[RMDB]
RNA sequence: GGGAACGACUCGAGUAGAGUCGAAAAGCGAGACAGGAGUAAUCCUAAACAGGGUUUUCACCCUUCCUUUAGUUUCCUUCCUCUCCUGGAGAGGUCUUCUGCCCUAGCCCGGUCUUCGAAGCUUCCUUUGGCUACUACCCGGUGGAAACAACUGAAGCAUCAUAGGUGUGUUCGCACACCUAUGAUGAAAAGAAACAACAACAACAAC
Reactivity to 2A3 in 0.01 (KOAc 150mM, MgCl2 10mM, bicine 150mM(pH8.5), 24C), signal-to-noise 2, nucleotides 027 to 156: g040c040g030a010g010a060c090a060g010g030a020g040u080a080a070u100c050c010u040a020a020a030c300a050g010g020g040u110u110u300u300c170a050c010c000c000u000u080c000c010u000u030u030a020g000u000u060u050c010c000u030u130c000c010u020c010u010c010c070u090g050g030a040g030a000g050g030u020c000u100u000c040u060g050c020c000c010u040a020g000c000c010c000g050g020u000c020u090u040c080g050a100a030g030c020u080u030c010c000u030u060u100g040g000c010u070a080c000u040a030c040c020c010g020g000u050g030g060a090a060a030c030a030a030c020u080g030a080a020g020
Reactivity to DMS in 0.01 (KOAc 150mM, MgCl2 10mM, bicine 150mM(pH8.5), 24C), signal-to-noise 1, nucleotides 027 to 156: g010c080g050a040g020a110c090a080g000g030a060g050u000a020a150u010c080c010u010a040a050a080c170a030g000g050g010u010u000u000u000c210a070c010c000c000u000u000c080c030u000u010u010a090g030u000u000u000c020c010u000u010c060c040u000c000u000c010c090u030g000g010a210g000a060g050g000u000c000u000u000c000u010g030c030c000c070u000a300g010c020c040c090g020g040u000c000u010u010c070g000a140a190g000c030u000u010c030c030u030u020u000g030g000c030u020a120c050u000a090c030c000c050g020g070u000g040g000a140a050a060c100a080a220c070u000g020a090a140g030